The data come from the RNA Mapping Database (RMDB), library VIROID. This 207-nucleotide RNA was probed chemically with 2A3. Values are in units of 0.01, from 0 to 300, in steps of 10.
RNA sequence: GGGAACGACUCGAGUAGAGUCGAAAAUACGUCCAUCCGAUGAACGUCCACCCCGGGAGUCAGAACUAGUCCUUUCAAUCCUUUUGCGAGAAUCUCAAAGUCUUUAUUGCCCUUUCUUUCUGCCUUGGGGAGGGUGACCACCACCAGAAACAGGGCGCGUAUAGCUCUGCUUCGGCAGAGCUAUACGAAAAGAAACAACAACAACAAC
Reactivity to 2A3 in 0.01 (KOAc 150mM, MgCl2 10mM, bicine 150mM(pH8.5), 24C), signal-to-noise 1, nucleotides 027 to 156: u120a020c010g030u000c030c000a080u100c080c090g220a220u020g020a090a050c050g020u000c010c000a070c090c000c000c010g070g000g000a030g060u080c000a000g040a130a090c030u030a020g050u080c000c000u020u190u100c080a050a040u080c010c000u000u200u090u060g040c020g010a110g060a190a040u090c020u010c110a090a060a010g120u080c110u010u210u070a190u130u300g050c000c000c020u000u150u270c040u000u030u000c020u110g000c000c010u040u050g000g000g040g000a070g040g010g060u040g050a000c000c030a060c030c000a000c000c000a000g070a020a020a030c030a040g000g000g000c000g010

The 2A3 profile rests on 560 reads.